Chemical mapping of a 177-nucleotide RNA with 2A3 and DMS. Values cover nucleotides 27 to 126. Conditions: 150 mM KOAc, 10 mM MgCl2 and 150 mM bicine (pH 8.5), 24 C. For 2A3 the reverse transcriptase was SuperScript II with manganese. It was measured as part of the RMDB library OK1LIB.
RNA sequence: GGGAACGACUCGAGUAGAGUCGAAAACUGUGGUGAGACCCUAUCUAGUAUAGCAAUCCACCAAGCAGGUGAAUUCACACAAUUCAGGUUCUCAUAGAAAAUGCGCCCUGACUUGACAGGUAUGGUCACGGCUAAUUUAUUUCGAUAAAUUAGCCGUAAAAGAAACAACAACAACAAC
Reactivity to 2A3 in 0.01 (KOAc 150mM, MgCl2 10mM, bicine 150mM(pH8.5), 24C), signal-to-noise 7, nucleotides 027 to 126: c010u030g050u090g060g050u050g040a160g010a020c040c010c000u000a000u010c020u030a060g090u120a080u060a090g020c050a030a020u010c010c010a000c010c000a090a040g150c060a040g020g040u020g070a030a040u070u050c040a050c020a010c020a080a040u030u040c010a010g020g020u120u050c020u000c020a030u080a050g220a050a140a020a010u080g020c020g040c020c000c000u020g010a040c000u040u030g020a030c040a030g000g070u090a070u100g040g010u050c030
Reactivity to DMS in 0.01 (KOAc 150mM, MgCl2 10mM, bicine 150mM(pH8.5), 24C), signal-to-noise 6, nucleotides 027 to 126: c030u000g050u020g000g010u010g000a040g000a040c100c260c030u000a010u010c050u010a110g040u030a110u010a060g010c150a050a090u000c010c000a020c010c010a120a130g030c200a110g000g000u010g000a050a010u000u000c050a120c170a240c030a020a040u000u000c040a010g000g000u010u020c000u010c010a040u000a070g000a060a050a050a050u000g010c080g010c300c000c010u020g010a040c030u010u020g000a100c010a040g000g000u010a010u010g000g010u000c030